Chemical mapping of a 177-nucleotide RNA with 2A3.
RNA sequence: GGGAACGACUCGAGUAGAGUCGAAAACAGCUAUUGGGAUUGAGAUCAGCCGAUAGCGACCGGGACGAGAGCACGGUGUUCUAGGAGCUCGGCAUAGGACAGCCGAGACAGUUCUCGAAGAUCUCAAGGGUAGCUUGGAGUUCGCUCCAAGCUACCCAAAAGAAACAACAACAACAAC
Reactivity to 2A3 in 0.01 (KOAc 150mM, MgCl2 10mM, bicine 150mM(pH8.5), 24C), signal-to-noise 1, nucleotides 027 to 126: c030a010g030c040u000a010u000u000g000g160g000a030u040u080g100a070g000a050u030c000a010g030c000c000g000a000u000a000g010c030g000a010c000c010g030g040g070a120c020g050a090g000a000g100c040a020c050g110g000u040g030u060u070c060u030a110g040g080a090g030c000u000c020g000g000c000a010u200a110g000g300a040c090a060g100c000c050g000a000g010a000c000a000g000u000u000c000u000c000g040a100a020g000a000u040c000u000c000a020a060
Reactivities are given for positions 27 through 126. The reactions ran in a buffer of 150 mM KOAc, 10 mM MgCl2 and 150 mM bicine (pH 8.5), at 24 C.